An RNA of 177 nucleotides, treated with 2A3 and DMS and read out base by base. It was measured as part of the RMDB library OK1LIB. Reactivities are given for positions 27 through 126. The RNA was probed in 150 mM KOAc, 10 mM MgCl2 and 150 mM bicine (pH 8.5) at 24 C. The 2A3 profile rests on 1,685 reads.

RNA sequence: GGGAACGACUCGAGUAGAGUCGAAAAGAACAUAUUUCUGGCUUGUCUGAGUUCAUGAAUUUUCAUAGUAUUUCCAGAAAUAGUCUAGCCUCCUAGGAAAACUGCAAAAUAGAGCUUGGAUGAUUAAAUUAUUACCGAUCUUCGGAUCGGUAAUAAUAAAAGAAACAACAACAACAAC
Reactivity to 2A3 in 0.01 (KOAc 150mM, MgCl2 10mM, bicine 150mM(pH8.5), 24C), signal-to-noise 4, nucleotides 027 to 126: g030a050a000c030a090u090a050u030u030u010c010u020g070g030c080u080u110g040u040c020u040g050a020g040u010u030c050a110u130g150a140a090u170u120u040u090c050a040u070a120g050u080a240u100u050u040c000c010a010g020a020a090a030u040a020g030u000c030u040a030g030c010c010u020c040c040u010a040g040g020a040a060a080a030c020u030g050c020a040a070a070a050u140a080g020a010g020c000u020u000g040g000a010u040g050a040u180u180a090a240
Reactivity to DMS in 0.01 (KOAc 150mM, MgCl2 10mM, bicine 150mM(pH8.5), 24C), signal-to-noise 3, nucleotides 027 to 126: g000a060a100c110a080u030a060u000u000u040c020u000g010g050c300u000u010g010u020c020u010g010a060g030u010u020c030a080u030g030a080a100u010u020u050u000c060a030u000a090g000u000a050u040u030u010c010c010a040g010a070a030a060u000a050g010u000c030u030a060g000c070c040u020c070c010u000a090g010g010a030a000a060a080c070u010g040c180a070a070a060a090u030a080g000a070g000c020u000u000g000g000a060u000g010a070u020u020a040a090